This 207-nucleotide RNA was probed chemically with DMS and 2A3.
DMS (dimethyl sulfate) methylates the pairing face of unpaired adenines and cytosines.
2A3 adducts were read by reverse transcription with SuperScript II with manganese.
The RNA was probed in 150 mM KOAc, 10 mM MgCl2 and 150 mM bicine (pH 8.5) at 24 C.
It was measured as part of the RMDB library M2RFPK.
For DMS, 7,277 sequencing reads were counted.
RNA sequence: GGGAACGACUCGAGUAGAGUCGAAAAUACCGUCUUCUCCCCGACGGUUUCAAUCCAUAGCUUCACGUUGUGUAGCGUAGGUGGAAGGUAUCGUGUGGUGUAUAAACACCACAUAGUCUAUUAGGGGUCAAGCUGAUAAACUUCGGUUUAUCAGCAAACCUCUGUAGAGAUUCGUCUCUACAGAGGUAAAAGAAACAACAACAACAAC
Reactivity to DMS in 0.01 (KOAc 150mM, MgCl2 10mM, bicine 150mM(pH8.5), 24C), signal-to-noise 2, nucleotides 027 to 156: u000a050c010c000g000u000c000u000u000c040u010c010c010c010c090g000a070c010g020g010u010u010u010c060a050a110u020c000c020a080u000a150g030c040u000u000c020a050c030g040u010u000g010u000g060u000a060g040c020g020u000a060g010g020u000g000g010a060a060g010g000u000a080u000c080g030u000g020u000g000g030u000g030u000a180u000a090a090a110c010a010c000c000a010c000a000u000a020g010u000c060u000a100u010u010a120g030g010g030g000u010c040a070a140g010c000u010g000a030u000a010a000a030c040u000u010c280g040g000u000u000u010a000u000c000a030g010c000a010a010
Reactivity to 2A3 in 0.01 (KOAc 150mM, MgCl2 10mM, bicine 150mM(pH8.5), 24C), signal-to-noise 5, nucleotides 027 to 156: u080a000c000c000g000u010c010u240u040c040u120c010c000c000c000g020a000c000g000g000u010u030u070c040a040a040u010c010c010a050u080a140g010c010u020u040c010a010c060g300u300u230g020u060g020u060a010g030c010g080u100a100g060g050u030g040g020a050a050g100g000u130a070u200c060g000u010g000u000g000g020u010g020u020a080u100a300a210a010c010a000c000c000a000c000a000u000a000g000u000c030u040a080u130u150a150g000g000g030g000u050c070a080a030g020c000u000g000a000u000a000a000a000c000u020u040c120g030g000u000u000u000a010u000c000a000g010c000a000a000